[RMDB]
RNA sequence: GGGAACGACUCGAGUAGAGUCGAAAACAUUGAUAUGAUCACCUUUAUUUACAAAAUGAAGAAACAGAGACUUCUAGAGGUUAAGUUUAUCAUCCAAAAUCACAUUGCUAGUAAAUGGCAGAUUGAGAUUGGAAUCCUAGGUCCCUGACUCCAAGCAAUAAUACGACCGAUUCGUCGGUCGUAUUAUAAAAGAAACAACAACAACAAC
Reactivity to DMS in 0.01 (KOAc 150mM, MgCl2 10mM, bicine 150mM(pH8.5), 24C), signal-to-noise 1, nucleotides 027 to 156: c040a050u000u000g030a160u000a060u000g000a110u030c030a090c000c020u010u000u000a070u000u000u000a250c100a090a100a120a090u000g010a080a070g000a160a090a070c080a080g000a170g000a090c010u010u000c050u000a070g000a080g010g000u010u010a050a130g000u000u000u000a040u030c020a130u030c060c010a090a060a060a220u000c020a070c120a110u020u000g010c030u000a070g000u000a050a120a140u010g010g040c070a050g040a190u000u000g000a080g010a290u000u000g000g010a050a090u000c060c030u010a050g010g000u000c000c030c030u020g000a110c020u000c010c030a010a000g000c100a140
Reactivity to 2A3 in 0.01 (KOAc 150mM, MgCl2 10mM, bicine 150mM(pH8.5), 24C), signal-to-noise 2, nucleotides 027 to 156: c020a060u050u110g010a020u110a050u090g090a040u130c020a090c020c000u100u080u050a230u120u230u100a170c140a060a250a060a120u210g010a040a050g020a030a140a010c100a140g060a010g030a100c010u060u020c010u050a050g020a060g100g000u080u120a030a010g020u110u100u070a050u040c030a020u000c010c000a000a000a020a070u010c000a020c030a150u000u040g000c000u020a050g020u250a250a150a170u040g010g000c020a010g030a110u030u030g010a020g010a030u020u010g010g010a030a010u030c030c020u000a040g000g070u030c010c010c040u030g050a080c030u000c080c000a040a020g080c010a090